The data come from the RNA Mapping Database (RMDB), library M2PK50. This 177-nucleotide RNA was probed chemically with 2A3 and DMS. The DMS profile rests on 2,126 reads. DMS (dimethyl sulfate) methylates the pairing face of unpaired adenines and cytosines. For 2A3, 3,748 sequencing reads were counted. The RNA was probed in 150 mM KOAc, 10 mM MgCl2 and 150 mM bicine (pH 8.5) at 24 C.
[RMDB]
RNA sequence: GGGAACGACUCGAGUAGAGUCGAAAAGUAUUUACCUUCGGGUAAAUACAAAUAAAGCCGGAAUAAAGUACAUGCAAAAACCGGCAAUAAUGCAUGUACAAAAAAUCAUCACCUUCGGGUGAUGAAACUACAAGAUUAGGUUCGCCUAAUCUUGUAGAAAAGAAACAACAACAACAAC
Reactivity to 2A3 in 0.01 (KOAc 150mM, MgCl2 10mM, bicine 150mM(pH8.5), 24C), signal-to-noise 2, nucleotides 027 to 126: g010u000a010u020u000u000a010c000c010u020u050c150g010g020g000u000a000a000a000u000a000c010a000a070a000u120a010a040a010g010c020c000g030g090a070a070u160a140a200a020g000u000a000c000a000u000g020c010a050a050a070a200a280c020c010g000g060c030a020a120u160a080a000u040g000c000a000u000g000u000a000c000a020a070a000a010a010a050u030c000a000u000c000a000c000c000u000u080c280g130g010g010u000g010a000u000g000a020a000a000
Reactivity to DMS in 0.01 (KOAc 150mM, MgCl2 10mM, bicine 150mM(pH8.5), 24C), signal-to-noise 2, nucleotides 027 to 126: g000u000a000u000u010u000a000c000c010u000u010c220g040g010g030u000a000a000a010u000a000c010a040a120a100u020a090a110a170g020c000c000g010g000a180a090u010a080a090a090g010u010a010c000a000u000g000c000a020a090a030a160a050c030c010g000g010c020a040a010u000a050a120u000g000c010a000u000g000u000a000c010a000a010a090a090a040a110u010c000a020u000c000a000c000c000u000u000c180g060g010g000u000g010a000u000g010a010a050a150